[RMDB]
RNA sequence: GGGAACGACUCGAGUAGAGUCGAAAAAUUUAAAAGGUCCGUAGUCAGUGUUGACAGGGAUGCUAGAAGACACUUUCUUCAUGGAGUGUAUUGGCAUUCUAGGUUAGCAUGUAGGAGCGGAAGAGGGCCCUCUAUAUUCGUUCGCGAAUAUAGAGGGAAAAGAAACAACAACAACAAC
Reactivity to DMS in 0.01 (KOAc 150mM, MgCl2 10mM, bicine 150mM(pH8.5), 24C), signal-to-noise 2, nucleotides 027 to 126: a070u010u010u010a070a080a100a100g010g030u000c020c030g010u000a120g010u010c070a160g010u000g020u000u000g000a010c010a220g010g000g000a000u000g000c000u010a030g020a100a100g000a030c010a010c010u000u010u010c040u010u000c300a120u000g010g000a000g010u010g010u000a040u000u010g000g010c010a010u000u000c000u000a060g000g000u000u000a020g020c010a010u000g000u010a100g010g010a220g000c010g010g000a040a060g010a080g000g000g010
Reactivity to 2A3 in 0.01 (KOAc 150mM, MgCl2 10mM, bicine 150mM(pH8.5), 24C), signal-to-noise 2, nucleotides 027 to 126: a000u100u130u140a040a100a020a000g080g080u000c010c030g020u000a060g120u130c040a010g010u010g000u040u040g010a010c000a040g000g030g000a010u020g000c000u050a070g060a190a000g070a070c000a000c000u100u110u160c050u200u140c060a200u270g000g000a020g000u000g000u030a050u020u090g000g000c000a000u020u000c000u020a050g160g000u010u000a000g000c020a030u010g020u100a070g030g070a030g010c010g010g030a010a010g070a090g060g040g040
Annotation:
An RNA of 177 nucleotides, treated with DMS and 2A3 and read out base by base. The RNA was probed in 150 mM KOAc, 10 mM MgCl2 and 150 mM bicine (pH 8.5) at 24 C. For 2A3, 1,242 sequencing reads were counted. In probing experiments dimethyl sulfate is read out at A N1 and C N3, which are open when not base-paired.